[RMDB]
RNA sequence: GGGAACGACUCGAGUAGAGUCGAAAAUCAGUGCUUAGGUAGGAAAAUGGAAGAUUUGGCAGCCCUACGCUUGCAUUUCUACAUGGCCACGGUCCUCCAGAGCUAGGUAGAGGAUGCCUCUUUCAUGGAGAGAGUGUUCUCUUUUUUGCCUCAGGCCAUACGAGAUGAUGUUCGCAUCAUCUCGUAUAAAAGAAACAACAACAACAAC
Reactivity to DMS in 0.01 (KOAc 150mM, MgCl2 10mM, bicine 150mM(pH8.5), 24C), signal-to-noise 2, nucleotides 027 to 156: u000c080a110g020u010g000c000u000u000a100g060g040u010a050g000g000a050a040a090a070u000g000g000a060a180g010a120u000u000u010g030g020c040a070g000c030c020c010u000a060c040g050c070u020u010g040c050a140u030u000u010c030u010a020c080a100u000g020g050c050c000a050c140g030g000u010c010c020u000c030c050a060g010a130g030c030u000a010g000g040u000a030g010a100g030g010a040u000g010c000c020u000c010u000u000u010c050a080u000g050g000a050g020a020g010a180g020u000g020u000u000c030u020c010u000u000u000u050u030u000g030c000c020u000c110a070g000g020c000c130
Reactivity to 2A3 in 0.01 (KOAc 150mM, MgCl2 10mM, bicine 150mM(pH8.5), 24C), signal-to-noise 3, nucleotides 027 to 156: u090c020a020g070u040g100c020u040u070a020g030g020u050a060g010g080a070a080a060a020u040g020g010a040a030g030a120u140u080u190g030g000c020a020g020c020c020c010u040a040c140g070c100u020u040g000c010a120u070u070u130c030u080a160c000a150u140g010g000c030c060a100c200g100g030u090c010c030u080c030c070a050g010a000g060c010u020a000g000g030u010a000g010a090g060g000a020u020g000c000c000u020c000u000u030u040c020a010u100g080g000a020g000a010g010a030g070u120g150u270u020c000u000c000u010u040u010u000u070u060g030c010c000u070c060a040g020g060c040c020